[RMDB]
The record gives the reactivity of an RNA of 207 nucleotides to DMS. The reactions ran in a buffer of 150 mM KOAc, 10 mM MgCl2 and 150 mM bicine (pH 8.5), at 24 C. For DMS, 2,542 sequencing reads were counted.
RNA sequence: GGGAACGACUCGAGUAGAGUCGAAAAAUGAGCCCCCUUCUGGUUUACAGGCCCCAAGUAGGGAAGACGUACCCAGGUAUUAUGCUUAAGCACCUUGAGUGAUAGAGGGCUUGCCCUCCAGGAAUACCCCUUCCAUUUUUGUGCCCUCUACUGUCAAACCUAAUUUAAUAUUCGUAUUAAAUUAGGUAAAAGAAACAACAACAACAAC
Reactivity to DMS in 0.01 (KOAc 150mM, MgCl2 10mM, bicine 150mM(pH8.5), 24C), signal-to-noise 1, nucleotides 027 to 156: a140u020g000a140g050c000c000c000c010c040u000u010c010u000g020g010u000u000u010a080c090a110g000g010c030c010c010c010a040a150g040u010a130g000g010g020a080a080g050a110c100g020u000a100c150c000c000a050g000g030u000a040u000u000a080u000g000c050u010u010a100a120g030c040a060c060c000u000u000g010a020g010u000g040a170u000a060g000a090g010g060g050c050u000u020g000c040c000c000u000c060c030a080g000g000a110a100u000a110c030c000c010c050u020u010c020c030a210u010u000u000u010u000g000u000g000c000c020c000u010c020u000a020c050u000g030u000c040a050a120